Source information: Structure probing data (2A3 and DMS) for a 177-nucleotide construct. DMS adducts were read by reverse transcription with MarathonRT. Conditions: 150 mM KOAc, 10 mM MgCl2 and 150 mM bicine (pH 8.5), 24 C. The 2A3 profile rests on 1,208 reads.
RNA sequence: GGGAACGACUCGAGUAGAGUCGAAAACUAAAGCGGCUAAUUAGCAGACGAUGAGGACCAACAAAAAAACACAGAGGCAAAUCAUCCUUGUCCCACAUACGGAGUGUCGGCUGCCGCUCCGACGAGGGACUACUCGUCCCUUCGGGGACGAGUAGUCAAAAGAAACAACAACAACAAC
Reactivity to 2A3 in 0.01 (KOAc 150mM, MgCl2 10mM, bicine 150mM(pH8.5), 24C), signal-to-noise 3, nucleotides 027 to 126: c040u050a000a220a010g040c020g090g010c030u070a120a270u090u110a210g040c050a010g060a070c080g060a050u030g040a040g030g110a040c020c040a050a210c150a050a130a050a020a000a030a000c110a050c060a050g120a050g060g000c080a140a010a080u070c000a040u010c000c090u070u040g040u080c040c050c010a120c000a050u280a010c010g070g010a090g060u050g040u040c000g050g000c070u100g000c040c000g000c010u000c000c000g040a000c000g000a100g000g090
Reactivity to DMS in 0.01 (KOAc 150mM, MgCl2 10mM, bicine 150mM(pH8.5), 24C), signal-to-noise 1, nucleotides 027 to 126: c000u010a020a070a010g030c000g000g010c030u020a080a190u060u020a060g010c000a040g000a160c110g030a080u000g000a090g000g000a140c050c090a020a130c180a000a000a020a060a070a010a000c200a060c300a080g000a000g010g010c000a040a080a040u000c020a050u010c170c240u000u000g000u000c000c040c020a120c160a100u000a000c010g000g000a060g090u000g000u000c030g000g000c090u000g040c000c000g000c000u050c000c000g000a040c080g000a220g000g000